[RMDB]
RNA sequence: GGGAACGACUCGAGUAGAGUCGAAAAUCACUGGUUUCUUCAUUGCCACAUCAAAUCAGAAAGGGUUGUGGCAGUGCCGAUUCUAGUGGCAAACGCAUACCAAUACUCUUCGGAGUAUUGGUAUGCGCACGAAUAGCAGCUUCGGCUGCUAUUCGUGAAAAGAAACAACAACAACAAC
Reactivity to DMS in 0.01 (KOAc 150mM, MgCl2 10mM, bicine 150mM(pH8.5), 24C), signal-to-noise 1, nucleotides 027 to 126: u000c010a000c000u000g000g000u010u000u010c000u010u000c000a020u000u000g010c000c000a010c010a020u000c030a050a060a140u010c240a160g000a150a160a180g000g000g000u010u000g010u010g000g000c000a010g010u000g000c170c120g020a010u000u010c010u000a020g020u000g000g000c290a070a080a160c010g000c000a010u000a000c000c000a000a010u000a000c000u000c000u000u030c200g020g000a010g010u000a000u000u000g000g000u000a010u000g010c030g000
Reactivity to 2A3 in 0.01 (KOAc 150mM, MgCl2 10mM, bicine 150mM(pH8.5), 24C), signal-to-noise 1, nucleotides 027 to 126: u060c000a000c000u010g010g000u000u030u000c000u010u000c000a020u010u000g010c010c000a020c000a010u000c030a030a250a210u130c060a040g300a240a150a040g200g000g000u050u020g000u020g030g000c010a000g000u000g020c000c000g010a010u010u000c010u010a000g000u000g010g010c030a100a090a030c000g000c000a000u000a000c000c000a000a000u000a000c000u000c000u040u100c270g190g000a000g020u000a000u000u020g000g000u010a000u000g000c000g010
Background: The record gives the reactivity of an RNA of 177 nucleotides to DMS and 2A3. For 2A3 the reverse transcriptase was SuperScript II with manganese. Conditions: 150 mM KOAc, 10 mM MgCl2 and 150 mM bicine (pH 8.5), 24 C. As a SHAPE reagent, 2A3 marks flexible, mostly unpaired nucleotides at the ribose 2'-OH.